Chemical mapping of a 207-nucleotide RNA with 2A3. 2A3 is a SHAPE reagent: it acylates the 2'-hydroxyl of flexible nucleotides of all four kinds. Conditions: 150 mM KOAc, 10 mM MgCl2 and 150 mM bicine (pH 8.5), 24 C.
[RMDB]
RNA sequence: GGGAACGACUCGAGUAGAGUCGAAAAGAAAGAGAGAAAGUUCAUUGUUUAUCGGAAACUUUAAACUAUAACCAUUCAAACUUUUCCAGAAGUUAGUUUGAAUAGAAAUUAAAAAGAAACUUCUGAAUAACCUUAUCAUGCUUCGGCAUGAUAAGAACGUAGAUUGUUUGUUCGCAAACAAUCUACGAAAAGAAACAACAACAACAAC
Reactivity to 2A3 in 0.01 (KOAc 150mM, MgCl2 10mM, bicine 150mM(pH8.5), 24C), signal-to-noise 2, nucleotides 027 to 156: g030a000a020a000g090a000g030a010g020a050a060a020g030u050u030c060a140u130u090g040u090u180u110a170u210c080g020g120a070a030a020c030u040u050u040a080a100a020c020u030a040u080a180a070c020c030a010u020u000c000a000a010a020c000u030u020u030u010c080c000a000g000a000a000g010u000u000a000g000u000u000u000g010a020a010u070a120g030a010a050a010u120u170a040a070a020a000a000g000a010a010a000c000u000u010c000u000g000a000a060u070a030a000c000c000u000u000a000u000c000a000u000g000c010u050u050c120g080g010c000a000u000g000a000u000a000a010g000a020a010